Overview
The record gives the reactivity of an RNA of 177 nucleotides to DMS and 2A3. The data come from the RNA Mapping Database (RMDB), library RFM100. The reactions ran in a buffer of 150 mM KOAc, 10 mM MgCl2 and 150 mM bicine (pH 8.5), at 24 C. Values cover nucleotides 27 to 126. For 2A3 the reverse transcriptase was SuperScript II with manganese.
RNA sequence: GGGAACGACUCGAGUAGAGUCGAAAAUAUUAUCCCGUAAAUCUUUUUAAAUUCUGGAACUAAUUAUAUAGAGGAUAUGUCUCAAUUUGUUCUGCAUUAAUGCCACAGUGGGGAUGGAGACCAGGCCCACUCGUGCAGUAUUCGUACUGCACGAGUGAAAAGAAACAACAACAACAAC
Reactivity to DMS in 0.01 (KOAc 150mM, MgCl2 10mM, bicine 150mM(pH8.5), 24C), signal-to-noise 3, nucleotides 027 to 126: u070a120u030u040a090u000c000c000c000g010u040a030a080a070u020c000u020u010u040u020u030a030a050a060u020u030c080u000g000g000a130a060c030u010a040a020u000u020a120u040a150u010a070g010a030g010g000a100u050a080u020g020u020c010u020c040a060a040u010u020u020g000u000u010c020u010g030c070a050u000u000a090a100u020g000c060c160a030c040a050g000u000g000g010g010g000a080u000g000g010a160g000a120c040c040a050g000g000c050c040
Reactivity to 2A3 in 0.01 (KOAc 150mM, MgCl2 10mM, bicine 150mM(pH8.5), 24C), signal-to-noise 4, nucleotides 027 to 126: u190a050u170u110a030u050c020c000c000g010u030a070a130a090u020c030u070u170u070u110u150a050a170a110u150u040c030u090g020g000a030a020c020u020a100a000u170u030a070u040a050u110a200g050a040g000g050a020u040a110u300g110u050c010u000c040a020a060u010u070u040g020u050u020c010u000g020c000a040u010u210a150a050u190g020c010c000a060c020a050g060u080g080g000g010g030a030u060g000g040a050g010a030c010c010a030g050g030c000c000